RNA sequence: GGGAACGACUCGAGUAGAGUCGAAAAGAUAUGGAAUAAUCCGUACGCUAGGGACAUGAUCGGAAACGAUCAGUCCCUUGGACCGUACGGAGUUAUUCCUAAGUCAAAACCCACUCUUCGGAGUGGGCGCUUGAUGUGACUUCGGUCACAUCAAGCGAAAAGAAACAACAACAACAAC
Reactivity to DMS in 0.01 (KOAc 150mM, MgCl2 10mM, bicine 150mM(pH8.5), 24C), signal-to-noise 1, nucleotides 027 to 126: g000a010u000a300u010g030g000a010a020u010a030a020u010c010c000g000u000a000c010g000c010u010a000g020g010g030a040c000a110u000g020a000u000c000g020g010a160a080a160c000g010a000u000c000a070g030u000c010c010c010u000u000g020g010a120c300c000g030u000a010c020g030g010a000g000u000u000a000u000u000c000c000u000a030a040g010u000c020a100a060a150a270c000c000c000a010c000u000c000u000u000c170g030g000a010g000u000g020g000g030

Chemical mapping of a 177-nucleotide RNA with DMS. The reactions ran in a buffer of 150 mM KOAc, 10 mM MgCl2 and 150 mM bicine (pH 8.5), at 24 C. The DMS profile rests on 864 reads.